Chemical mapping of a 177-nucleotide RNA with 2A3 and DMS. The RNA was probed in 150 mM KOAc, 10 mM MgCl2 and 150 mM bicine (pH 8.5) at 24 C. For DMS, 44,448 sequencing reads were counted.

[RMDB]
RNA sequence: GGGAACGACUCGAGUAGAGUCGAAAAGGCGCAAUCUUGGCUCACUGCAACCUCCGUCUCCUGGAUUCAAGUGAUUCUCCUGCCUUAGCCUCCUGAGUAGCUGGGAUUCCAGGUGCCUGCCACCACAAAACAUUAUCUUUUUCGAAAGAUAAUGUUUAAAAGAAACAACAACAACAAC
Reactivity to 2A3 in 0.01 (KOAc 150mM, MgCl2 10mM, bicine 150mM(pH8.5), 24C), signal-to-noise 5, nucleotides 027 to 126: g030g000c030g010c050a050a120u040c030u050u090g040g010c010u010c030a050c040u060g020c020a050a100c010c020u020c020c020g050u010c020u010c020c010u020g050g020a080u090u090c060a110a040g050u050g090a080u090u020c020u020c020c020u030g040c000c010u040u030a030g030c010c000u010c000c010u040g030a040g050u060a020g020c020u030g000g000g060a090u140u030c030c030a040g000g030u010g010c000c010u020g020c010c010a050c020c010a060c040a020
Reactivity to DMS in 0.01 (KOAc 150mM, MgCl2 10mM, bicine 150mM(pH8.5), 24C), signal-to-noise 9, nucleotides 027 to 126: g010g020c050g020c090a090a050u000c040u000u000g010g000c040u000c050a070c050u000g010c060a070a090c070c020u000c020c040g010u000c030u000c020c020u000g000g000a080u000u000c060a060a070g010u000g000a110u000u000c030u000c020c040u000g010c030c020u000u000a070g010c030c020u000c020c020u000g010a060g010u000a090g010c020u000g000g000g000a080u000u000c050c040a060g000g010u000g010c030c040u000g010c040c030a080c050c030a070c150a070